An RNA of 177 nucleotides, treated with 2A3 and DMS and read out base by base. Conditions: 150 mM KOAc, 10 mM MgCl2 and 150 mM bicine (pH 8.5), 24 C.
RNA sequence: GGGAACGACUCGAGUAGAGUCGAAAAGAUAUGGAUAUAUCCACCAGUUCUUGGAUUUACUCAUCGGAAACGAUGAGUUGUCAGAACGUGGAGUAUAUCCUAAGUCAAACCGUCCUUCGGGACGGAAGUAGUGAAAAUACUUCGGUAUUUUCACUACAAAAGAAACAACAACAACAAC
Reactivity to 2A3 in 0.01 (KOAc 150mM, MgCl2 10mM, bicine 150mM(pH8.5), 24C), signal-to-noise 5, nucleotides 027 to 126: g030a020u090a050u200g000g000a000u020a000u010a000u020c000c000a030c050c070a080g020u030u000c040u150u300g220g010a050u300u130u260a020c000u000c000a010u000c010g020g080a150a070a060c000g000a000u000g000a000g010u000u020g000u000c000a000g010a010a010c020g020u020g010g010a030g100u040a000u000a000u000c000c000u010a130a020g040u020c030a070a090a080c010c000g000u010c010c010u060u110c300g130g000g000a000c000g000g010a010a020
Reactivity to DMS in 0.01 (KOAc 150mM, MgCl2 10mM, bicine 150mM(pH8.5), 24C), signal-to-noise 5, nucleotides 027 to 126: g000a040u000a300u010g000g010a020u000a010u000a020u000c010c010a040c040c300a180g030u000u010c000u000u000g040g010a020u010u010u000a000c000u000c000a000u000c000g010g010a140a120a240c000g010a010u000g010a010g020u000u000g000u000c000a030g010a010a010c000g020u000g010g020a060g020u010a010u000a000u000c000c000u000a040a100g010u000c040a110a130a250c010c000g010u000c000c000u000u010c230g030g020g000a010c010g000g000a000a040
Source: RMDB library TTRDES, as collected in RNAgym.